[RMDB]
RNA sequence: GGGAACGACUCGAGUAGAGUCGAAAACUUUUCGGCAUGUCCUGCUGCGAACGAAGCGUCCACCAGGACCACGGAGUCCAAAUCAAUGAGGUACACCUUCUUGGUGUCUUCGUCGUAAGCCAAAUUAGCAUUAAUCGACUUUCGAGUCGAUUAAUGCAAAAGAAACAACAACAACAAC
Reactivity to 2A3 in 0.01 (KOAc 150mM, MgCl2 10mM, bicine 150mM(pH8.5), 24C), signal-to-noise 5, nucleotides 027 to 126: c030u060u050u110u190c050g050g020c030a040u110g030u030c000c020u000g010c010u040g010c030g090a130a050c010g040a070a010g040c060g110u000c010c000a010c000c000a050g000g020a050c030c000a110c120g060g000a070g030u000c010c030a030a060a050u190c160a080a110u200g060a070g060g040u140a010c040a060c030c000u010u050c030u100u170g020g000u020g120u030c000u020u000c000g000u000c040g020u050a200a050g000c010c000a040a140a170u120u130a050
Reactivity to DMS in 0.01 (KOAc 150mM, MgCl2 10mM, bicine 150mM(pH8.5), 24C), signal-to-noise 2, nucleotides 027 to 126: c070u000u000u090u000c140g000g000c040a050u040g020u100c030c050u000g020c040u000g040c160g040a080a010c060g010a070a100g030c300g030u010c280c000a050c040c000a000g000g000a010c300c210a050c190g010g040a060g000u000c010c020a000a100a220u100c170a140a060u000g000a110g020g000u110a040c000a070c030c000u000u040c170u060u000g000g000u000g010u000c000u000u010c120g040u000c010g000u000a030a120g000c000c080a040a100a000u070u000a170
Structure probing data (2A3 and DMS) for a 177-nucleotide construct.
For DMS, 1,118 sequencing reads were counted.
The reactions ran in a buffer of 150 mM KOAc, 10 mM MgCl2 and 150 mM bicine (pH 8.5), at 24 C.
DMS adducts were read by reverse transcription with MarathonRT.
It was measured as part of the RMDB library OK1LIB.
Values cover nucleotides 27 to 126.
2A3 adducts were read by reverse transcription with SuperScript II with manganese.
High 2A3 reactivity points to a flexible backbone, as in loops and unpaired stretches.